This 177-nucleotide RNA was probed chemically with 2A3 and DMS. Conditions: 150 mM KOAc, 10 mM MgCl2 and 150 mM bicine (pH 8.5), 24 C. For 2A3, 3,808 sequencing reads were counted.
[RMDB]
RNA sequence: GGGAACGACUCGAGUAGAGUCGAAAAUCCGCAGCUCCGUCUUCCUUACGCUGACUAUGGACGGGUUAGCCAGGCGUCUCGCCUCCCGGGCUUAGGAGAUACGCACAUAGUUCGCGGCCACAUAUUGGUCAUACAUAUCCUUCGGGAUAUGUAUGACAAAAGAAACAACAACAACAAC
Reactivity to 2A3 in 0.01 (KOAc 150mM, MgCl2 10mM, bicine 150mM(pH8.5), 24C), signal-to-noise 3, nucleotides 027 to 126: u000c010c010g010c060a010g000c020u010c040c010g060u010c010u060u070c030c000u040u040a050c050g000c030u030g010a010c030u050a050u110g020g040a030c030g030g020g050u050u110a030g030c000c010a040g040g000c000g080u020c060u070c110g010c010c000u000c010c000c000g080g010g010c010u050u080a080g000g080a080g010a050u100a080c030g000c020a000c000a050u060a020g040u020u050c040g000c000g040g000c050c030a090c020a030u230a110u110u260g070
Reactivity to DMS in 0.01 (KOAc 150mM, MgCl2 10mM, bicine 150mM(pH8.5), 24C), signal-to-noise 4, nucleotides 027 to 126: u000c020c020g010c090a120g020c030u000c020c020g000u010c040u000u010c030c040u000u000a120c080g030c030u000g020a050c040u010a050u000g010g020a080c060g010g010g020u000u000a060g010c010c100a100g000g000c040g010u000c090u010c070g010c050c020u010c040c040c060g000g010g020c070u000u000a080g000g010a100g000a080u000a060c050g010c230a120c070a040u010a060g010u000u010c240g020c030g000g000c030c050a050c110a070u000a140u020u000g010